[RMDB]
RNA sequence: GGGAACGACUCGAGUAGAGUCGAAAAUCGUAGGUGGAAAGGUCCCAGGGCAGGAAUGUGCCCCGGGCAGCAGAAAGGCCAGUGUGCUUGAAGUGGAGGUAGAAGAGGUCUGUCGGAACCUGUUGCAGGUCACACAAAUGUGCAUGCCUGCCCCCAACACGUAUUUAGCUUUCGAGCUAAAUACGUGAAAAGAAACAACAACAACAAC
Reactivity to DMS in 0.01 (KOAc 150mM, MgCl2 10mM, bicine 150mM(pH8.5), 24C), signal-to-noise 1, nucleotides 027 to 156: u000c150g010u010a080g020g030u020g030g010a070a100a140g020g010u000c010c010c010a030g030g000g000c010a090g030g030a160a130u010g010u010g020c010c010c000c010g000g000g000c080a020g000c030a080g010a040a040a080g000g010c010c060a070g010u030g010u000g020c070u030u000g010a100a120g050u000g030g000a100g030g040u000a040g000a070a100g020a130g030g000u000c030u000g020u000c030g080g000a090a090c020c040u010g000u020u010g020c000a070g040g020u020c300a010c010a300c030a110a080a020u020g050u000g020c070a100u000g000c050c000u010g000c000c000c000c000c010a020a250
Reactivity to 2A3 in 0.01 (KOAc 150mM, MgCl2 10mM, bicine 150mM(pH8.5), 24C), signal-to-noise 2, nucleotides 027 to 156: u090c040g020u050a050g000g020u070g070g020a070a020a030g040g020u090c000c000c000a000g020g000g000c030a040g010g300a280a100u230g060u040g070c040c010c000c000g000g000g000c010a000g000c000a000g030a030a030a000g010g010c050c020a070g020u050g010u020g100c040u110u110g020a110a040g020u040g040g020a040g030g010u070a020g000a120a010g040a010g040g020u010c020u040g080u040c010g000g030a040a030c000c010u040g050u080u080g010c010a010g020g020u090c010a010c000a010c000a020a280a140u260g010u020g030c040a010u130g020c000c010u020g010c000c000c000c000c000a020a000

The record gives the reactivity of an RNA of 207 nucleotides to DMS and 2A3. Values cover nucleotides 27 to 156.